Conditions: 150 mM KOAc, 10 mM MgCl2 and 150 mM bicine (pH 8.5), 24 C.
Chemical mapping of a 177-nucleotide RNA with 2A3 and DMS.
DMS adducts were read by reverse transcription with MarathonRT.
It was measured as part of the RMDB library TTRDEL.
Reactivities are given for positions 27 through 126.
For 2A3 the reverse transcriptase was SuperScript II with manganese.
DMS (dimethyl sulfate) methylates the pairing face of unpaired adenines and cytosines.

RNA sequence: GGGAACGACUCGAGUAGAGUCGAAAAGAUAUGGAAGUCCUUGGACCCAGAGUUGAGUUGUCGGAAACGACAAUACAACGACGAAGGCUAGGACUUCCUAAGUCAAACGUUGCGUUCGCGCAACGAAGUCCCAGGUAUUGUUCGCAAUACCUGGGACAAAAGAAACAACAACAACAAC
Reactivity to 2A3 in 0.01 (KOAc 150mM, MgCl2 10mM, bicine 150mM(pH8.5), 24C), signal-to-noise 2, nucleotides 027 to 126: g010a010u040a020u120g020g000a000a020g000u000c030c030u100u200g260g090a300c000c040c050a030g020a010g030u010u030g030a110g090u020u000g000u000c020g020g010a040a040a030c000g000a010c000a000a000u060a070c000a000a000c010g070a010c070g020a280a100g010g010c000u020a010g000g000a000c010u010u000c000c000u000a000a010g000u020c050a090a040a110c010g010u000u030g030c030g000u040u100c290g000c020g000c170a000a000c000g040a020a020
Reactivity to DMS in 0.01 (KOAc 150mM, MgCl2 10mM, bicine 150mM(pH8.5), 24C), signal-to-noise 2, nucleotides 027 to 126: g000a010u000a300u010g000g000a010a010g000u000c000c010u000u010g010g010a300c020c020c000a270g000a240g000u000u000g010a300g050u000u000g040u000c000g000g000a060a150a230c000g000a000c010a000a000u020a100c030a040a000c010g010a180c040g020a170a090g000g000c000u000a010g000g000a050c030u000u000c000c000u000a000a030g010u000c040a060a100a290c060g000u000u000g000c010g000u030u040c160g000c010g000c000a010a000c000g040a060a090